[RMDB]
RNA sequence: GGGAACGACUCGAGUAGAGUCGAAAAUCGCCCGGAAGCAUGUGGCUUACGGCAUUUGGCCUUUCAGGUCGAUGACAUUGAACUGGCGGUGCGGGAACUUGAAGGCGCUGGUGUAAUUUGCGAAGCACAACGCUAGUAGAUUCGUCUACUAGCGUUGAAAAGAAACAACAACAACAAC
Reactivity to 2A3 in 0.01 (KOAc 150mM, MgCl2 10mM, bicine 150mM(pH8.5), 24C), signal-to-noise 8, nucleotides 027 to 126: u040c030g030c020c010c000g020g040a030a010g030c060a060u160g040u160g300g000c010u030u060a020c020g020g000c010a020u060u070u210g040g000c020c000u050u150u140c110a030g020g000u010c020g050a060u070g020a020c050a090u050u120g050a070a050c040u040g040g000c020g010g040u050g030c030g020g030g010a060a050c020u060u100g060a080a020g050g000c040g000c050u030g000g050u030g010u040a080a150u040u070u100g020c030g030a060a020g060c060a020
Reactivity to DMS in 0.01 (KOAc 150mM, MgCl2 10mM, bicine 150mM(pH8.5), 24C), signal-to-noise 9, nucleotides 027 to 126: u010c120g010c050c010c020g010g010a080a060g010c040a130u000g020u010g010g000c030u000u010a120c090g010g000c020a050u000u000u010g030g010c020c010u000u010u010c150a050g020g010u000c010g000a080u010g000a070c060a100u000u000g010a080a070c110u000g010g010c040g010g010u010g010c050g000g000g000a070a070c080u000u000g010a070a080g010g010c080g010c030u000g000g010u000g000u010a050a090u010u000u010g010c050g000a100a120g000c140a200